Chemical mapping of a 177-nucleotide RNA with DMS and 2A3.
Conditions: 150 mM KOAc, 10 mM MgCl2 and 150 mM bicine (pH 8.5), 24 C.
The 2A3 profile rests on 1,991 reads.
It was measured as part of the RMDB library VIROID.
The DMS profile rests on 1,937 reads.

RNA sequence: GGGAACGACUCGAGUAGAGUCGAAAAAAUCCUCACGGAGAAAAGCAGACAAAUCACCUCCAGAGGACCCCUUCAGCGAACAGAGAACUCUGACGCGCGAGGAGUAAGAACAUAGCGAUGGGGCGAGCAAUAUCAUCUUCUUCGGAAGAUGAUAUUGAAAAGAAACAACAACAACAAC
Reactivity to DMS in 0.01 (KOAc 150mM, MgCl2 10mM, bicine 150mM(pH8.5), 24C), signal-to-noise 3, nucleotides 027 to 126: a070a110u010c010c000u000c040a160c190g010g020a070g020a070a090a120a110g030c100a100g000a100c140a070a070a050u010c090a120c120c010u000c010c000a140g000a040g000g000a050c030c000c000c010u000u000c060a110g020c020g010a100a080c040a020g000a070g010a130a100c090u000c010u010g000a210c130g000c050g000c110g020a130g000g000a030g020u010a040a110g000a060a060c100a040u010a100g020c040g020a050u020g000g000g010g030c050g010a090g000
Reactivity to 2A3 in 0.01 (KOAc 150mM, MgCl2 10mM, bicine 150mM(pH8.5), 24C), signal-to-noise 2, nucleotides 027 to 126: a000a000u040c010c000u000c010a090c150g010g000a020g020a020a110a060a040g060c140a080g110a280c100a080a160a080u110c030a040c010c000u010c010c000a010g010a010g020g020a030c000c000c000c020u040u050c010a030g000c010g020a110a070c020a030g040a020g010a130a040c080u000c000u040g000a040c050g000c010g050c080g160a050g010g020a030g010u060a130a060g030a090a000c060a100u100a050g030c050g020a030u060g010g000g040g000c040g020a020g000